This 177-nucleotide RNA was probed chemically with 2A3 and DMS. For DMS, 6,944 sequencing reads were counted. For DMS the reverse transcriptase was MarathonRT. It was measured as part of the RMDB library 15KREP.
[RMDB]
RNA sequence: GGGAACGACUCGAGUAGAGUCGAAAAGGUGCCAUGUAUAAAGGCAAACCAAUUCUUUGGGUCAAUAAAGCAUCUUAUGAUACUAAUCUUAAUAAGUUCAAUAGAGCUAGUUUGCGUCAAAUUUUUGCAUAAUAUACACGUUCGCGUGUAUAUUAUGAAAAGAAACAACAACAACAAC
Reactivity to 2A3 in 0.01 (KOAc 150mM, MgCl2 10mM, bicine 150mM(pH8.5), 24C), signal-to-noise 3, nucleotides 027 to 126: g070g010u040g020c000c030a070u110g130u050a160u100a170a090a020g020g000c000a090a030a030c010c000a020a070u080u060c040u070u060u030g040g020g040u090c010a010a050u020a070a090a000g000c010a120u040c010u030u090a050u080g020a010u030a130c010u070a080a050u040c030u130u090a080a050u100a270a010g010u030u020c000a000a050u020a080g010a000g010c010u000a030g070u020u040u040g030c050g090u090c050a040a080a120u110u110u070u100u120g020
Reactivity to DMS in 0.01 (KOAc 150mM, MgCl2 10mM, bicine 150mM(pH8.5), 24C), signal-to-noise 7, nucleotides 027 to 126: g000g020u000g000c000c010a110u000g020u010a120u010a100a140a100g000g010c020a030a070a130c020c020a100a150u000u000c060u000u000u010g010g010g010u010c070a060a030u000a150a120a050g010c020a040u000c010u000u000a170u000g000a050u010a040c020u000a060a100u000c160u010u010a080a090u000a100a070g000u000u000c020a030a290u010a030g010a040g010c030u000a070g010u000u000u000g020c050g020u000c050a030a070a150u010u000u000u000u000g010